Background: This 177-nucleotide RNA was probed chemically with 2A3 and DMS. The 2A3 profile rests on 2,280 reads. For 2A3 the reverse transcriptase was SuperScript II with manganese. The RNA was probed in 150 mM KOAc, 10 mM MgCl2 and 150 mM bicine (pH 8.5) at 24 C.
[RMDB]
RNA sequence: GGGAACGACUCGAGUAGAGUCGAAAAAUUUAUGAUGCAACAAACAUUAUCGCAUUACUUUGGGUAUGAAACAUUUCGACCAGGACAAGAAGAAAUUAUUAGCAAAGUAUUAGACCAUCGUAAUGUGCCGUUAUAGACCGUUCGCGGUCUAUAACGGAAAAGAAACAACAACAACAAC
Reactivity to 2A3 in 0.01 (KOAc 150mM, MgCl2 10mM, bicine 150mM(pH8.5), 24C), signal-to-noise 3, nucleotides 027 to 126: a000u130u150u070a130u090g070a020u030g030c050a120a040c000a090a240a010c020a070u060u120a050u240c020g000c020a000u030u010a020c010u030u040u030g040g030g070u190a140u200g040a200a000a000c050a030u010u060u060c020g040a060c010c020a050g050g070a050c060a110a110g000a040a000g070a010a050a000u110u160a100u040u120a070g090c050a000a140a100g050u130a130u100u200a100g140a030c000c000a000u000c020g000u010a010a010u010g020u040g030
Reactivity to DMS in 0.01 (KOAc 150mM, MgCl2 10mM, bicine 150mM(pH8.5), 24C), signal-to-noise 2, nucleotides 027 to 126: a090u080u000u030a050u000g000a020u000g000c040a070a030c290a200a070a220c070a050u020u000a020u020c000g030c000a000u000u000a000c000u030u000u000g000g000g030u020a080u000g010a090a090a100c210a070u000u000u000c040g040a250c070c030a140g000g020a050c300a080a150g090a010a220g020a010a000a040u000u000a050u000u000a180g020c150a020a030a070g000u010a020u030u030a050g020a110c030c000a040u000c000g010u010a010a000u000g000u000g000